Description
The record gives the reactivity of an RNA of 177 nucleotides to DMS and 2A3. It was measured as part of the RMDB library RFMREP. Values are in units of 0.01, from 0 to 300, in steps of 10. The 2A3 profile rests on 1,899 reads. For DMS, 2,463 sequencing reads were counted.
[RMDB]
RNA sequence: GGGAACGACUCGAGUAGAGUCGAAAACUGAUUAUCAGGGAAGGCGUAGGGAAACCGACAUGGCCGCAGCAUUGCGAGGGCCGCCGUGUUCAAGCGCGGGGAGUCAAUCGGACACGACCCGAAACCGGAUGUUAUAAGUCUUCGGACUUAUAACAUCAAAAGAAACAACAACAACAAC
Reactivity to DMS in 0.01 (KOAc 150mM, MgCl2 10mM, bicine 150mM(pH8.5), 24C), signal-to-noise 4, nucleotides 027 to 126: c020u000g000a220u010u010a090u010c060a040g010g010g040a110a100g010g020c000g020u000a140g000g010g020a060a090a060c040c030g000a060c080a090u000g000g010c020c020g010c040a200g010c090a090u000u010g020c040g010a190g000g000g020c020c040g000c020c010g010u000g010u010u010c230a120a130g010c080g000c020g010g000g010g000a090g010u000c110a050a120u010c050g000g000a140c100a100c130g000a160c030c000c010g000a050a110a070c030c090g000
Reactivity to 2A3 in 0.01 (KOAc 150mM, MgCl2 10mM, bicine 150mM(pH8.5), 24C), signal-to-noise 2, nucleotides 027 to 126: c010u000g030a090u140u300a070u300c060a020g080g020g040a110a040g040g000c020g020u050a030g010g000g000a070a020a010c020c010g000a010c010a100u110g030g000c000c010g020c000a010g060c040a110u190u280g000c020g000a110g030g030g000c010c010g020c020c010g000u000g010u090u190c180a150a060g000c010g000c000g030g000g010g010a050g040u060c070a070a100u010c010g010g030a010c020a010c150g040a030c000c000c040g020a030a010a000c010c030g050